An RNA of 207 nucleotides, treated with 2A3 and DMS and read out base by base. The data come from the RNA Mapping Database (RMDB), library ARCHII. DMS (dimethyl sulfate) methylates the pairing face of unpaired adenines and cytosines. For 2A3 the reverse transcriptase was SuperScript II with manganese.

RNA sequence: GGGAACGACUCGAGUAGAGUCGAAAAGGGUUCGAAUCCUACGGCCGGACGUGGUUGCAAUUAUACAACUCUUUGUGGGUUGGCGCCGCGCCCAAGCUCAACUGCACUUCCUCGUAAGAGGAGCCGAGUUUUAGACGUGUCCCGGAUUAUAUCGAUCGUAGUGAAUUAUGUUCGCAUAAUUCACUACAAAAGAAACAACAACAACAAC
Reactivity to 2A3 in 0.01 (KOAc 150mM, MgCl2 10mM, bicine 150mM(pH8.5), 24C), signal-to-noise 5, nucleotides 027 to 156: g030g000g020u080u110c040g030a060a060u040c010c010u010a040c010g030g030c040c070g010g000a020c010g030u020g020g000u090u300g030c030a080a090u250u080a100u140a140c010a000a010c000u040c020u100u160u300g130u300g040g010g000u000u020g040g000c020g000c010c000g000c010g000c000c000c000a000a000g010c010u020c040a050a080c090u090g010c050a050c080u130u090c010c000u000c000g020u080a120a020g000a000g020g000a000g010c010c030g030a030g000u030u040u040u120a050g010a040c030g050u070g060u060c000c000c000g010g000a120u210u110a100u080a020u160c070g030a020u060c080
Reactivity to DMS in 0.01 (KOAc 150mM, MgCl2 10mM, bicine 150mM(pH8.5), 24C), signal-to-noise 2, nucleotides 027 to 156: g010g010g030u010u010c110g000a110a070u010c030c010u000a080c030g010g040c010c090g040g010a030c060g010u000g020g020u000u000g060c030a130a120u000u020a200u000a300c020a020a040c020u000c040u000u040u010g030u000g040g030g020u000u020g020g010c030g020c030c010g030c000g000c010c010c000a070a080g000c010u000c010a120a120c130u000g080c130a020c070u010u000c000c000u000c010g010u000a110a210g000a020g000g020a050g050c020c040g010a120g000u000u000u020u000a080g010a050c050g010u000g020u000c020c020c000g010g000a130u000u000a090u010a150u000c020g010a210u010c090
Overview
The reactions ran in a buffer of 150 mM KOAc, 10 mM MgCl2 and 150 mM bicine (pH 8.5), at 24 C. For DMS the reverse transcriptase was MarathonRT. For DMS, 3,942 sequencing reads were counted. Values cover nucleotides 27 to 156.